[RMDB]
RNA sequence: GGGAACGACUCGAGUAGAGUCGAAAACACGUGCCUUCGGGCACGUGAAAAAAACCUUUGUGUCCAUACAGCUUUGAUCUACUGAUCAUCCCAUUGGGAUGCGUAGUAGGGAGCUGUUUGGACACUCUGGUAAAAAACAACGUGUUCGCACGUUGAACGUUAGGAAGAACUUCGGUUCUUCCUAACGAAAAGAAACAACAACAACAAC
Reactivity to 2A3 in 0.01 (KOAc 150mM, MgCl2 10mM, bicine 150mM(pH8.5), 24C), signal-to-noise 4, nucleotides 027 to 156: c020a000c000g000u000g010c020c010u050u120c290g020g000g000c010a010c000g000u010g020a020a000a000a010a000a000a000c010c000u010u000u000g000u000g000u000c000c000a010u010a020c000a000g010c020u190u210u160g070a110u130c000u000a000c000u010g060a070u130c010a010u010c000c010c080a300u250u300g020g000g000a000u000g030c040g080u110a000g000u000a000g030g020g000a000g000c000u000g000u000u000u000g000g010a000c000a000c000u000c000u000g000g000u070a080a120a010a000a000a000c010a000a000c010g000u000g030u080u130c250g010c080a000c010g000u020u010g000a090a000
Reactivity to DMS in 0.01 (KOAc 150mM, MgCl2 10mM, bicine 150mM(pH8.5), 24C), signal-to-noise 1, nucleotides 027 to 156: c010a000c000g040u010g000c000c000u010u000c300g050g040g030c000a000c000g030u010g000a000a000a090a100a080a070a050c030c030u000u030u010g000u000g020u000c000c000a030u000a030c010a010g010c000u010u000u000g000a130u010c000u010a020c010u020g020a140u000c010a010u000c000c000c030a300u010u030g040g070g000a010u000g020c080g030u000a030g020u000a080g010g000g000a030g040c000u000g000u010u030u000g000g000a000c000a000c000u000c030u000g000g000u000a000a060a080a060a070a120c030a000a010c020g020u000g000u000u000c300g060c020a030c000g000u000u000g000a050a170
An RNA of 207 nucleotides, treated with 2A3 and DMS and read out base by base. Reactivities are given for positions 27 through 156. For DMS the reverse transcriptase was MarathonRT. Values are in units of 0.01, from 0 to 300, in steps of 10. Conditions: 150 mM KOAc, 10 mM MgCl2 and 150 mM bicine (pH 8.5), 24 C.